[RMDB]
RNA sequence: GGGAACGACUCGAGUAGAGUCGAAAAGGGCAAGUCAGCCGUCGAGUUCGUCGAGUUCGUCGAGCAGUCGGUCGGCCGCUGCCGUCGAGGACUCGGGACCACGAGCGGUGAGCAGGUCGCCGUCGACGCGUCGAGGUGAUUUCGAUCACCUCGACGCAAAAGAAACAACAACAACAAC
Reactivity to DMS in 0.01 (KOAc 150mM, MgCl2 10mM, bicine 150mM(pH8.5), 24C), signal-to-noise 1, nucleotides 027 to 126: g010g000g030c070a060a090g050u010c080a230g020c010c000g000u000c000g020a090g000u000u000c070g010u000c000g010a040g000u010u010c030g000u000c000g000a220g000c020a070g020u020c010g010g060u000c160g010g020c000c040g020c000u000g000c000c020g000u000c010g020a280g020g010a050c000u010c090g070g000g000a090c000c030a130c030g010a120g020c030g000g040u000g000a090g010c040a020g030g000u010c080g010c040c020g000u000c030g010a100c110
Reactivity to 2A3 in 0.01 (KOAc 150mM, MgCl2 10mM, bicine 150mM(pH8.5), 24C), signal-to-noise 2, nucleotides 027 to 126: g010g010g000c060a000a030g050u100c020a010g060c020c000g010u000c010g000a050g040u030u070c040g070u000c030g040a040g030u040u070c010g050u010c000g070a060g000c040a040g050u210c050g050g000u110c050g110g120c050c010g010c010u000g000c020c030g010u020c000g020a030g000g050a010c000u020c060g000g010g030a060c000c000a080c060g030a040g080c000g040g030u080g110a030g050c100a060g070g030u050c040g000c010c010g060u060c040g000a010c060